[RMDB]
RNA sequence: GGGAACGACUCGAGUAGAGUCGAAAAUUUACAUAUUUAUCGUGGUUGAAGAUGGAGGUUGAGUAGUGCAUAUGGAGUGCUACAUAAUAACAUUUUGUGCGAAGGCGCGCGCGCGUGUGCCAUGAUGUCUCAUUGUCCAUUUCGAUGGACAAUGAGAAAAAGAAACAACAACAACAAC
Reactivity to 2A3 in 0.01 (KOAc 150mM, MgCl2 10mM, bicine 150mM(pH8.5), 24C), signal-to-noise 4, nucleotides 027 to 126: u100u060u040a150c130a120u260a180u120u060u130a090u100c040g020u030g010g020u040u200g080a130a080g020a060u060g000g000a040g070g150u110u080g100a100g010u040a000g010u040g020c030a060u090a200u290g180g030a070g010u010g020c010u010a010c000a030u220a030a070u120a090a050c060a040u100u110u080u130g180u100g010c020g030a050a070g090g000c000g000c060g000c010g000c000g010c000g070u050g070u070g010c050c000a000u060g010a040u060g050
Reactivity to DMS in 0.01 (KOAc 150mM, MgCl2 10mM, bicine 150mM(pH8.5), 24C), signal-to-noise 2, nucleotides 027 to 126: u000u040u080a040c090a030u030a040u030u000u050a100u010c020g000u010g000g000u000u020g000a070a060g050a050u030g000g010a060g030g040u000u000g040a110g070u010a010g010u010g000c010a080u020a150u040g000g000a120g010u010g000c030u000a010c030a070u060a040a080u010a050a120c090a060u030u000u010u020g020u010g010c020g010a040a090g000g000c010g020c020g010c040g030c070g010c050g010u000g000u010g010c020c000a030u000g010a040u000g000